[RMDB]
RNA sequence: GGGAACGACUCGAGUAGAGUCGAAAAGCAAGCAGCACUGCCCCAAUCUAAAGAUUCCAAUUUUUUAAACGAGUCCGGGGUUCUAUUGUAAAUGCCCGAAUAGAACCCUGUUCAAGUGGUUUGUCCAAGACACUUAGGUUCGCCUAAGUGAAAAGAAACAACAACAACAAC
Reactivity to 2A3 in 0.01 (KOAc 150mM, MgCl2 10mM, bicine 150mM(pH8.5), 24C), signal-to-noise 9, nucleotides 027 to 129: g030c040a030a010g010c040a010g020c010a000c060u060g020c000c010c000c010a020a050u030c030u180a100a030a040g070a070u090u020c030c030a050a050u030u030u030u080u140u280a170a200a050c050g020a020g020u000c030c010g020g000g000g000u000u000c000u010a000u010u040g110u140a090a100a130u180g070c010c030c020g030a000a000u000a000g000a010a000c000c000c000u010g010u020u030c020a060a030g040u050g030g070u050u070u090g050u040c020c010a030a010g090a040
Reactivity to DMS in 0.01 (KOAc 150mM, MgCl2 10mM, bicine 150mM(pH8.5), 24C), signal-to-noise 6, nucleotides 027 to 129: g000c040a070a110g030c060a060g000c000a040c070u030g030c090c020c000c050a040a020u050c090u000a080a100a070g030a090u000u000c040c050a070a030u020u040u070u050u080u110a080a100a120c060g020a120g040u000c090c050g000g000g030g010u000u000c020u000a000u010u020g030u000a040a070a090u050g030c040c050c050g050a030a010u010a010g000a000a030c010c000c000u000g000u000u000c070a040a090g000u030g020g040u000u020u020g030u000c030c030a100a090g000a170
Background
Structure probing data (2A3 and DMS) for a 170-nucleotide construct. Source: RMDB library 15KLIB, as collected in RNAgym. The reactions ran in a buffer of 150 mM KOAc, 10 mM MgCl2 and 150 mM bicine (pH 8.5), at 24 C.